[RMDB]
RNA sequence: GGGAACGACUCGAGUAGAGUCGAAAAGAUAUGGACCUUCCAUACUUCAACAGCAAAUUCGGAAACGAAUUUGACAUGAAGAUGGAGGUCCUAAGUCAAAAGUGGGCUGAGUUCGCUCAGCCCACAACAGAAUAAGCGAGUUCGCUCGCUUAUUCUGAAAAGAAACAACAACAACAAC
Reactivity to DMS in 0.01 (KOAc 150mM, MgCl2 10mM, bicine 150mM(pH8.5), 24C), signal-to-noise 3, nucleotides 027 to 126: g000a060u000a300u000g010g000a020c000c000u020u010c000c000a010u000a170c020u000u000c000a010a100c300a220g020c020a000a020a010u000u000c010g000g010a100a130a260c010g000a010a000u000u000u000g000a020c100a180u000g000a010a010g020a060u000g000g000a020g010g010u000c000c020u000a020a060g000u000c050a130a060a080a140g010u000g000g010g040c010u000g000a020g010u000u000c240g010c000u000c000a000g020c000c000c000a000c010a040a070
Reactivity to 2A3 in 0.01 (KOAc 150mM, MgCl2 10mM, bicine 150mM(pH8.5), 24C), signal-to-noise 2, nucleotides 027 to 126: g010a010u020a060u170g010g000a000c000c000u240u160c040c100a100u100a300c030u050u040c040a160a160c030a130g180c000a000a000a000u000u010c000g000g050a070a050a110c000g010a010a040u000u000u000g030a000c000a130u080g020a000a020g030a000u010g000g010a010g000g000u000c000c000u030a020a000g000u010c000a000a010a020a170g000u000g000g020g030c020u020g000a010g010u190u300c290g060c080u010c020a000g000c010c000c000a000c000a000a000
The record gives the reactivity of an RNA of 177 nucleotides to DMS and 2A3. Values cover nucleotides 27 to 126. It was measured as part of the RMDB library TTRDES. The 2A3 profile rests on 2,406 reads. The RNA was probed in 150 mM KOAc, 10 mM MgCl2 and 150 mM bicine (pH 8.5) at 24 C.